Description
Structure probing data (DMS and 2A3) for a 177-nucleotide construct. Source: RMDB library M2PK50, as collected in RNAgym.
[RMDB]
RNA sequence: GGGAACGACUCGAGUAGAGUCGAAAAGACACUCAGUUCGCUGAGUGUCAAAUAAAAUCAGCGGUAAAAAACGAGGCGUUAUAACCGCUGAACGCCUCGUUAAAAGAACCAAGUUCGCUUGGUUCAACUCCUAUAUGUUGUUCGCAACAUAUAGGAGAAAAGAAACAACAACAACAAC
Reactivity to DMS in 0.01 (KOAc 150mM, MgCl2 10mM, bicine 150mM(pH8.5), 24C), signal-to-noise 5, nucleotides 027 to 126: g000a010c000a010c000u000c000a010g010u010u010c210g030c000u010g000a010g010u000g010u000c000a020a070a060u010a060a050a090a070u010c040a030g020c040g010g010u010a000a050a080a050a020a030c020g000a020g010g000c000g010u000u000a070u010a080a120c030c030g010c050u000g000a010a010c010g010c000c000u000c000g000u000u000a020a070a080a100g000a010a000c000c000a000a010g010u000u010c230g020c000u000u000g000g010u000u000c000a070a120
Reactivity to 2A3 in 0.01 (KOAc 150mM, MgCl2 10mM, bicine 150mM(pH8.5), 24C), signal-to-noise 6, nucleotides 027 to 126: g000a000c000a000c000u000c000a010g040u060u070c110g030c120u000g000a000g010u000g000u000c000a010a000a000u030a000a010a000a070u070c020a010g030c020g100g040u090a100a140a020a000a010a020c010g000a000g010g000c000g000u020u040a080u060a150a040c020c020g000c030u010g010a000a000c000g000c000c000u000c000g000u000u040a010a020a010a030g000a000a000c000c000a010a000g010u020u060c180g000c100u000u000g000g000u000u010c000a010a040

2A3 is a SHAPE reagent: it acylates the 2'-hydroxyl of flexible nucleotides of all four kinds.